[RMDB]
RNA sequence: GGGAACGACUCGAGUAGAGUCGAAAAUCUGUCUGACGUCUGUUCUCCUGAACUCAUGGUACAGGAGAACUGUGUGAGUUCGGUGUGAGGAGUGCUCACACAUCACGGACGUUGACAGGAAUGGCGGGCAGUGGUGACUAUUCGUAGUCACCACUGCAAAAGAAACAACAACAACAAC
Reactivity to 2A3 in 0.01 (KOAc 150mM, MgCl2 10mM, bicine 150mM(pH8.5), 24C), signal-to-noise 2, nucleotides 027 to 126: u030c000u000g060u030c050u090g040a020c000g010u000c000u020g030u030u000c000u000c000c010u000g010a020a020c010u030c080a230u300g110g000u050a050c000a000g020g000a000g000a010a000c000u000g020u020g000u010g000a000g000u040u060c060g090g040u120g060u100g120a150g070g100a170g080u090g000c000u020c000a010c000a010c000a010u080c040a030c070g010g000a000c000g010u010u010g000a000c000a010g030g020a040a040u070g090g040c090g060g080
Reactivity to DMS in 0.01 (KOAc 150mM, MgCl2 10mM, bicine 150mM(pH8.5), 24C), signal-to-noise 2, nucleotides 027 to 126: u000c020u000g000u010c020u010g030a000c000g000u000c000u000g010u000u000c000u000c020c000u000g010a040a040c010u000c200a190u010g010g040u010a100c000a020g000g000a060g010a000a000c010u000g030u000g000u000g010a010g000u000u010c050g000g020u000g020u000g010a080g010g010a170g020u000g010c020u000c000a010c000a000c000a020u020c200a110c300g020g010a000c000g030u000u000g000a010c010a030g000g000a070a030u000g000g020c090g000g010